[RMDB]
RNA sequence: GGGAACGACUCGAGUAGAGUCGAAAACAACUGUUAUCUUGCCACUGCAUUGUUAACACUCCAACAACUAGAGUUGAAGUUUAAUCCACCUGCUCUACAAAGGGCUGGUGAAGCUGCUAACUUUUGUACGCCCCAGACUUCGGUCUGGGGAAAAGAAACAACAACAACAAC
Reactivity to DMS in 0.01 (KOAc 150mM, MgCl2 10mM, bicine 150mM(pH8.5), 24C), signal-to-noise 2, nucleotides 027 to 129: c000a050a010c000u040g020u070u020a070u000c070u040u040g030c080c070a000c050u030g020c010a090u070u000g020u010u050a070a060c130a080c160u060c010c010a020a030c220a020a080c140u010a060g020a140g010u000u010g020a060a080g000u000u010u000a060a130u040c120c000a040c010c010u020g060c010u060c010u010a080c300a140a180a050g000g000g010c020u000g000g000u040g060a050a080g010c040u040g040c100u010a070a000c060u020u080u000u000g000u070a000c080g020
Reactivity to 2A3 in 0.01 (KOAc 150mM, MgCl2 10mM, bicine 150mM(pH8.5), 24C), signal-to-noise 4, nucleotides 027 to 129: c000a000a000c030u030g010u070u060a110u060c040u040u140g010c030c050a090c090u100g000c050a060u060u040g020u080u070a020a030c040a010c060u000c000c020a040a010c000a030a040c040u100a020g030a000g130u000u000g000a050a010g000u000u060u270a080a060u070c020c000a000c000c000u000g000c010u000c010u030a150c100a050a260a070g000g000g000c000u000g000g000u000g020a000a000g000c000u040g000c040u040a020a040c000u060u020u000u030g030u010a020c100g070
Structure probing data (DMS and 2A3) for a 170-nucleotide construct.
The data come from the RNA Mapping Database (RMDB), library 15KLIB.
The reactions ran in a buffer of 150 mM KOAc, 10 mM MgCl2 and 150 mM bicine (pH 8.5), at 24 C.
For 2A3 the reverse transcriptase was SuperScript II with manganese.